[RMDB]
RNA sequence: GGGAACGACUCGAGUAGAGUCGAAAAUCACGUUCUCGUACGAGAGAUCUCGUGAGUACGAACACUCGUGUGAGAUCACGAUCACGAGUUCGAACACACUCUCGAACGUUCGUACGUGUGUGAACUCACUCGAGAACGUGAACACACGUACGUGAUCCGUAACACAGGGUUUCGACCCUGUGUUACGAAAAGAAACAACAACAACAAC
Reactivity to 2A3 in 0.01 (KOAc 150mM, MgCl2 10mM, bicine 150mM(pH8.5), 24C), signal-to-noise 4, nucleotides 027 to 156: u050c010a020c010g010u000u000c010u000c020g010u060a030c030g000a000g000a000g030a090u080c050u050c150g020u010g020a080g050u130a070c040g020a060a000c060a000c090u010c010g010u010g010u020g060a040g060a050u070c100a050c170g010a020u010c000a000c000g010a010g020u050u010c020g050a110a010c080a010c020a030c070u020c010u000c020g040a090a030c110g090u110u090c010g000u010a000c020g000u000g000u000g010u030g060a060a050c020u030c110a060c050u060c050g010a010g000a030a010c000g020u010g010a010a000c020a000c000a010c030g080u180a000c030g000u030g030a030u050c030
Reactivity to DMS in 0.01 (KOAc 150mM, MgCl2 10mM, bicine 150mM(pH8.5), 24C), signal-to-noise 1, nucleotides 027 to 156: u010c010a040c010g010u000u010c000u000c000g100u000a270c070g010a000g000a210g000a090u000c030u000c070g040u000g020a060g050u000a150c030g000a050a100c120a030c070u000c010g000u070g020u020g000a210g000a120u000c050a060c040g000a170u030c020a030c010g010a080g010u010u000c030g000a130a180c000a100c050a130c070u020c000u000c000g010a150a130c050g000u000u000c000g000u000a010c050g030u000g000u000g020u000g010a090a100c030u010c010a100c020u010c030g000a020g000a050a010c000g030u000g000a030a080c020a050c060a060c070g000u010a060c010g000u000g000a090u010c000
Chemical mapping of a 207-nucleotide RNA with 2A3 and DMS. Reactivities are given for positions 27 through 156. It was measured as part of the RMDB library OK3TST. 2A3 adducts were read by reverse transcription with SuperScript II with manganese. The reactions ran in a buffer of 150 mM KOAc, 10 mM MgCl2 and 150 mM bicine (pH 8.5), at 24 C.